[RMDB]
RNA sequence: GGGAACGACUCGAGUAGAGUCGAAAAAGUUAUGAGUUCGCUCAUAACUACAGCGAAAGGCGCUCGCACCCGCAGUCCGCCGAAGGCAUCCCAGCCUGUCCAAGUUGGUAUAUUUCGAUAUACCAAACGUAUAUGCGCAGUUCGCUGCGCAUAUACGAAAAGAAACAACAACAACAAC
Reactivity to 2A3 in 0.01 (KOAc 150mM, MgCl2 10mM, bicine 150mM(pH8.5), 24C), signal-to-noise 1, nucleotides 027 to 126: a000g020u000u010a020u000g020a010g040u070u070c190g030c060u000c000a000u010a000a000c000u020a030c030a020g000c020g100a000a030a080g030g000c020g000c030u010c020g000c000a060c000c030c020g000c020a020g020u050c010c020g000c000c000g040a030a030g010g030c000a040u080c000c010c020a020g000c010c000u070g000u040c040c000a100a060g130u080u020g020g000u000a000u020a010u000u110u120c280g060a030u000a040u020a020c000c020a010a010a030
Reactivity to DMS in 0.01 (KOAc 150mM, MgCl2 10mM, bicine 150mM(pH8.5), 24C), signal-to-noise 3, nucleotides 027 to 126: a010g010u000u000a010u000g000a000g010u000u020c250g010c020u000c000a000u000a000a000c000u000a110c160a160g000c010g000a020a030a050g000g000c010g010c030u000c050g010c020a190c030c010c050g020c060a020g010u000c300c010g030c020c030g010a150a020g010g010c000a050u000c030c040c040a160g010c010c010u000g000u010c120c170a100a090g010u010u010g000g010u000a010u000a020u000u000u020c190g000a030u000a010u010a010c000c000a000a020a100
Background
Structure probing data (2A3 and DMS) for a 177-nucleotide construct. Conditions: 150 mM KOAc, 10 mM MgCl2 and 150 mM bicine (pH 8.5), 24 C. For 2A3, 1,582 sequencing reads were counted.